[RMDB]
RNA sequence: GGGAACGACUCGAGUAGAGUCGAAAACCAAUGCCAAAGUACUGGAAAAAAGUUUCUUAAUAACCAUAGCGAUCUCCUCAGAUGCAAGGCCAUGAAAUUAGCCACCUGCGUAUUUUUUUAUGCAAUUUCGCAUCUGAUUAUUCGUAAUCAGAUGCGAAAAAGAAACAACAACAACAAC
Reactivity to 2A3 in 0.01 (KOAc 150mM, MgCl2 10mM, bicine 150mM(pH8.5), 24C), signal-to-noise 2, nucleotides 027 to 126: c000c000a040a100u130g010c020c020a090a010a000g090u010a090c060u090g000g000a060a000a040a060a030a050g000u020u040u010c020u090u070a250a160u070a030a050c020c000a010u060a020g050c050g060a060u060c050u000c050c000u040c000a030g020a160u060g010c030a000a040g030g010c000c000a010u020g120a130a010a140u120u040a050g020c020c000a000c030c070u030g010c000g020u000a080u020u220u000u020u030u090u100a050u080g020c020a050a140u000u000